The record gives the reactivity of an RNA of 177 nucleotides to 2A3 and DMS. The data come from the RNA Mapping Database (RMDB), library OK1LIB. For DMS the reverse transcriptase was MarathonRT. The RNA was probed in 150 mM KOAc, 10 mM MgCl2 and 150 mM bicine (pH 8.5) at 24 C.
RNA sequence: GGGAACGACUCGAGUAGAGUCGAAAAUGGCGGCGUAGUCGUUGUCUUGGGUCAGGAUCGCAAUGCCGUGCGCCACGGCUGUGGCCGCAAUCCAGCUGUCGUUGAUCGGCACGCGCAGUUUGGCGGCACGCAUAUAGCCGUUCGCGGCUAUAUGCGUAAAAGAAACAACAACAACAAC
Reactivity to 2A3 in 0.01 (KOAc 150mM, MgCl2 10mM, bicine 150mM(pH8.5), 24C), signal-to-noise 3, nucleotides 027 to 126: u110g060g000c010g000g060c020g020u060a030g050u090c050g030u030u050g090u010c030u040u100g080g000g000u080c060a060g040g000a070u060c020g020c060a000a060u060g030c020c020g020u020g050c040g030c000c030a030c000g010g000c050u060g030u140g080g010c020c030g000c010a020a010u010c010c010a010g030c020u010g030u090c030g030u070u130g110a200u170c010g020g020c010a020c030g010c010g020c020a010g010u040u050u090g080g000c000g000g000c010
Reactivity to DMS in 0.01 (KOAc 150mM, MgCl2 10mM, bicine 150mM(pH8.5), 24C), signal-to-noise 4, nucleotides 027 to 126: u030g010g020c020g000g000c040g010u030a070g020u000c060g010u000u010g000u020c060u000u030g000g020g020u040c030a110g000g010a090u010c080g000c090a100a110u020g000c020c000g010u000g030c130g000c080c040a090c030g000g000c030u000g000u010g020g020c020c040g000c100a080a090u020c030c020a130g010c030u000g020u000c080g020u020u010g000a140u010c000g000g000c020a060c120g030c060g020c110a060g010u010u000u020g000g010c040g000g010c060